[RMDB]
RNA sequence: GGGAACGACUCGAGUAGAGUCGAAAAUGCUAUGAUGUGGUAAUUUGCGGUUGAUCCGGCUUUUGUGAAUCUCCCGCCAGAGUAUUCUCAAGCAACUGUCGGGGUGAUAUUUAAUUUCUUACAUAUUAGCACUGUGUAAUUUCGAUUACACAGUGCUAAAAGAAACAACAACAACAAC
Reactivity to 2A3 in 0.01 (KOAc 150mM, MgCl2 10mM, bicine 150mM(pH8.5), 24C), signal-to-noise 1, nucleotides 027 to 126: u070g000c010u030a000u250g120a030u040g080u120g060g000u000a080a140u050u130u160g060c040g010g070u060u110g020a030u020c000c070g070g000c040u300u070u000u000g100u110g100a090a070u050c000u000c000c000c000g000c000c000a020g000a000g000u010a110u290u060c100u070c110a040a100g080c000a000a110c000u000g090u000c000g000g010g000g020u000g000a010u010a050u040u150u000a020a090u060u000u000c000u050u100a000c010a070u250a150u090u020